[RMDB]
RNA sequence: GGGAACGACUCGAGUAGAGUCGAAAAGUUUCCAGUUCGCUGGAAACAAAAAGCGUACUACCAGAACGAAGAACGAGAACUACUUUAGCGUCCCAAAUAGGACGUGGGAAGCUCGGGAGUUCUGGUAUCGCAAAAAACCAGGUGUUCGCACCUGGAAUCUUAGCUACAGAUUCGUCUGUAGCUAAGAAAAAGAAACAACAACAACAAC
Reactivity to 2A3 in 0.01 (KOAc 150mM, MgCl2 10mM, bicine 150mM(pH8.5), 24C), signal-to-noise 2, nucleotides 027 to 156: g000u000u000u000c010c000a000g010u040u110c240g010c050u000g000g010a040a000a000c040a060a050a030a010a000g030c030g030u090a190c060u010a000c010c010a010g020a000a010c030g160a210a100g030a020a000c030g000a030g020a130a060c070u130a040c020u290u120u200a070g000c000g000u000c000c020c040a070a230a180u210a060g000g000a000c000g020u070g030g210g000a060a000g010c000u000c000g010g000g010a030g000u000u000c000u000g000g000u000a000u000c000g050c000a030a200a000a000a000a000c010c010a010g000g000u010g030u080u100c300g020c210a000c000c010u020g010g000a010a010
Reactivity to DMS in 0.01 (KOAc 150mM, MgCl2 10mM, bicine 150mM(pH8.5), 24C), signal-to-noise 2, nucleotides 027 to 156: g010u000u000u010c020c010a050g050u000u000c280g020c010u030g000g000a040a010a020c010a070a080a100a130a140g000c000g000u000a030c120u000a100c000c000a010g010a020a020c000g020a140a150g020a210a160c010g020a080g010a150a190c010u000a100c050u000u000u000a300g010c010g000u000c010c000c000a020a110a200u000a060g000g010a020c000g020u000g000g010g010a080a050g030c000u000c040g000g000g000a210g010u000u000c000u000g000g000u010a020u000c010g060c040a000a060a060a070a040a110c010c000a030g020g020u000g040u000u010c180g110c000a030c010c000u000g000g000a050a020
Overview:
The record gives the reactivity of an RNA of 207 nucleotides to 2A3 and DMS. For 2A3, 1,464 sequencing reads were counted. High 2A3 reactivity points to a flexible backbone, as in loops and unpaired stretches. It was measured as part of the RMDB library RNAMAK. The reactions ran in a buffer of 150 mM KOAc, 10 mM MgCl2 and 150 mM bicine (pH 8.5), at 24 C.